[RMDB]
RNA sequence: GGGAACGACUCGAGUAGAGUCGAAAAGAUAUGGAAUUACAAAGGAGCAACAGCUAGUGGCUCGGAAACGAGCCCUAGACAUGCUCCAUAAAGAUUCCUAAGUCAAAGUUCUGGUUCGCCAGAACAAGUAUUAUGUACUCUUCGGAGUACAUAAUACAAAAGAAACAACAACAACAAC
Reactivity to 2A3 in 0.01 (KOAc 150mM, MgCl2 10mM, bicine 150mM(pH8.5), 24C), signal-to-noise 4, nucleotides 027 to 126: g000a000u050a010u100g000g010a010a010u030u040a110c120a220a300a260g000g000a010g000c080a110a200c090a180g040c030u010a010g010u140g300g000c000u010c020g010g010a040a040a010c000g000a000g000c020c010c000u000a000g010a010c010a060u200g000c000u000c000c000a010u000a000a020a010g030a010u000u010c010c000u030a070a010g010u030c060a150a060a100g000u000u000c000u000g050g070u040u130c300g040c100c010a000g010a010a000c000a020a010
Reactivity to DMS in 0.01 (KOAc 150mM, MgCl2 10mM, bicine 150mM(pH8.5), 24C), signal-to-noise 4, nucleotides 027 to 126: g000a030u010a280u010g010g000a020a010u010u000a100c180a150a230a280g010g020a020g020c000a080a100c270a180g000c010u000a010g010u020g020g000c000u000c010g010g000a030a050a100c000g000a030g000c000c000c000u000a010g000a030c090a200u000g010c010u000c000c000a020u000a060a130a230g000a030u000u000c000c000u000a040a160g000u010c040a080a160a210g010u000u000c010u000g000g000u000u010c280g020c010c000a020g010a010a000c000a060a120
This 177-nucleotide RNA was probed chemically with 2A3 and DMS. For 2A3, 9,076 sequencing reads were counted. For 2A3 the reverse transcriptase was SuperScript II with manganese. The RNA was probed in 150 mM KOAc, 10 mM MgCl2 and 150 mM bicine (pH 8.5) at 24 C. For DMS the reverse transcriptase was MarathonRT.